An RNA of 177 nucleotides, treated with DMS and 2A3 and read out base by base. The 2A3 profile rests on 8,896 reads.

[RMDB]
RNA sequence: GGGAACGACUCGAGUAGAGUCGAAAAGGCGGUAAAGCCAUAGCCGGAAAAAGGUAUUAGCGAAAUGCAAGCAAGCACGGGGCGACGCCAACCGCAACGCCGUAGAACCAGAAUAUGGGAAUUAGGAACGCAUUAUUUACUUCGGUAAAUAAUGCGUAAAAGAAACAACAACAACAAC
Reactivity to DMS in 0.01 (KOAc 150mM, MgCl2 10mM, bicine 150mM(pH8.5), 24C), signal-to-noise 6, nucleotides 027 to 126: g020g000c030g010g010u030a040a170a110g020c020c030a080u020a140g010c050c000g000g010a060a080a070a130a080g000g010u010a080u010u020a100g030c020g000a100a100a090u030g000c030a080a100g020c100a110a080g010c050a050c060g010g010g010g010c020g010a080c110g010c050c030a050a100c080c020g000c050a070a070c100g000c020c000g020u010a040g010a110a130c030c010a050g000a080a050u030a070u010g010g020g000a080a090u010u030a090g000g000a170
Reactivity to 2A3 in 0.01 (KOAc 150mM, MgCl2 10mM, bicine 150mM(pH8.5), 24C), signal-to-noise 6, nucleotides 027 to 126: g020g000c000g010g120u120a070a150a000g010c010c010a040u080a000g070c030c010g050g040a090a080a040a000a020g100g010u090a090u150u120a040g010c030g030a090a070a040u160g010c030a010a050g040c020a070a030g010c020a010c040g030g000g010g010c020g020a020c020g000c020c020a020a020c030c000g010c030a050a030c030g020c030c000g020u050a030g040a080a010c010c000a010g070a110a050u170a050u090g030g000g030a030a080u130u060a150g100g070a040
For DMS the reverse transcriptase was MarathonRT.
It was measured as part of the RMDB library OK1LIB.